[RMDB]
RNA sequence: GGGAACGACUCGAGUAGAGUCGAAAACAUACUUUCGAGUAUGGAUGAGAUAUGGAAUUAUUGUAGAUCGUGAACUACCUUUCUAAGUGUCGGAAACGACACUGAAGGCACGAUCGCAGAUAAUAAUUCCUAAGUCAGUGUCUGCCUUCGGGCAGAACUUACUUCCGGAGUUCGCUCCGGAAGUAAGAAAAGAAACAACAACAACAAC
Reactivity to DMS in 0.01 (KOAc 150mM, MgCl2 10mM, bicine 150mM(pH8.5), 24C), signal-to-noise 2, nucleotides 027 to 156: c010a010u000a010c000u010u000u010c230g010a040g030u000a020u000g000g020a160u000g010a130g010a130u000a220u000g010g020a050a010u010u000a000u010u000g010u000a140g010a010u000c010g000u010g010a090a140c040u000a220c000c010u000u010u000c090u010a070a020g000u000g010u010c000g000g000a160a120a230c010g010a020c010a000c000u000g020a020a020g020g000c020a030c010g000a020u000c010g000c110a110g020a100u000a020a020u010a020a040u000u010c000c010u000a020a120g010u000c000a080g010u010g010u000c010u010g010c020c000u000u010c300g040g030g000c000a010g000a020a050
Reactivity to 2A3 in 0.01 (KOAc 150mM, MgCl2 10mM, bicine 150mM(pH8.5), 24C), signal-to-noise 5, nucleotides 027 to 156: c010a000u020a010c000u120u140u160c230g050a020g020u000a010u000g020g100a120u200g160a090g010a040u060a050u110g000g000a000a000u000u010a000u010u020g050u120a090g010a010u000c000g000u000g020a070a070c070u160a110c290c010u100u160u100c090u160a180a030g000u000g000u000c000g010g000a030a050a050c010g000a000c010a000c000u000g000a000a000g010g000c000a000c000g000a000u000c000g000c000a000g000a010u050a000a000u000a000a000u010u000c000c000u000a030a010g030u000c040a040g070u030g070u150c000u000g000c000c000u020u080c190g030g000g000c000a000g010a010a010
Description: Chemical mapping of a 207-nucleotide RNA with DMS and 2A3. For DMS, 5,314 sequencing reads were counted. DMS adducts were read by reverse transcription with MarathonRT. It was measured as part of the RMDB library RNAMAK. The RNA was probed in 150 mM KOAc, 10 mM MgCl2 and 150 mM bicine (pH 8.5) at 24 C. Values cover nucleotides 27 to 156.